An RNA of 177 nucleotides, treated with 2A3 and DMS and read out base by base.
RNA sequence: GGGAACGACUCGAGUAGAGUCGAAAACGGCGUGUCGGUGCUGUUUCAGGGGUUUUUUCAUCGCCCACACAACGCCCCCGGGGGCGCGAUUACGCCAGAGCGGACCAAUGUGAUCCUGGGGUCCACCCGAACCUAAACCUUUCGAGGUUUAGGUUCGAAAAGAAACAACAACAACAAC
Reactivity to 2A3 in 0.01 (KOAc 150mM, MgCl2 10mM, bicine 150mM(pH8.5), 24C), signal-to-noise 6, nucleotides 027 to 126: c030g000g010c020g000u020g010u020c040g040g150u170g040c030u040g120u180u110u110c050a060g000g000g020g020u040u010u020u050u110u080c130a180u130c070g080c020c050c000a040c000a010c020a040a090c070g030c030c010c000c010c020g080g000g000g010g000c020g010c000g020a010u170u190a030c000g000c000c000a000g010a020g030c090g000g000a010c010c010a060a140u250g040u130g070a070u050c010c020u070g080g030g000g000u000c000c000a000c000c020
Reactivity to DMS in 0.01 (KOAc 150mM, MgCl2 10mM, bicine 150mM(pH8.5), 24C), signal-to-noise 3, nucleotides 027 to 126: c110g000g030c020g050u000g010u000c000g000g070u030g040c050u000g000u020u040u010c010a100g000g000g000g020u000u010u030u010u050u000c200a140u020c190g000c010c030c010a070c140a050c230a060a030c260g000c010c000c030c000c070g040g000g000g020g000c000g000c040g020a020u010u020a000c020g000c010c010a110g000a080g020c080g020g000a000c010c000a100a140u050g000u000g010a040u050c040c010u000g020g020g000g010u000c000c020a090c070c130

The RNA was probed in 150 mM KOAc, 10 mM MgCl2 and 150 mM bicine (pH 8.5) at 24 C. DMS adducts were read by reverse transcription with MarathonRT. Source: RMDB library OK1LIB, as collected in RNAgym.